[RMDB]
RNA sequence: GGGAACGACUCGAGUAGAGUCGAAAACGCCGUAGACGAUGGAGAAGGUGUCUUUACCAAUAAUUUUGUGGAGUUGGAGGUCGAUGUCGGGGUUGCCGUUCCAGUUGACACCGUGUGCGGCGGCCUGGUUUUAUGGUCAGUUCGCUGACCAUAAAACAAAAGAAACAACAACAACAAC
Reactivity to DMS in 0.01 (KOAc 150mM, MgCl2 10mM, bicine 150mM(pH8.5), 24C), signal-to-noise 2, nucleotides 027 to 126: c020g000c000c010g050u000a050g000a040c030g020a080u010g020g000a110g000a110a110g010g010u010g010u000c040u010u010u010a140c040c040a050a160u020a090a140u000u000u000u000g030u020g020g010a080g000u000u000g010g010a210g010g000u010c090g000a060u010g020u010c090g010g010g020g010u000u010g000c010c030g000u000u000c040c010a070g010u000u020g000a120c030a020c050c030g000u000g010u000g000c000g010g000c000g000g000c000c000u000g020
Reactivity to 2A3 in 0.01 (KOAc 150mM, MgCl2 10mM, bicine 150mM(pH8.5), 24C), signal-to-noise 1, nucleotides 027 to 126: c000g020c000c000g010u010a030g010a120c030g040a070u150g030g090a140g010a130a100g100g020u030g050u010c020u060u140u130a040c010c050a030a030u170a050a120u080u100u130u110g080u050g060g050a090g010u080u060g040g000a020g050g050u060c070g030a020u070g080u120c040g000g000g000g040u020u110g040c030c010g000u000u020c050c010a000g000u070u060g030a000c020a020c070c080g030u070g010u040g040c000g000g000c000g000g010c000c040u000g040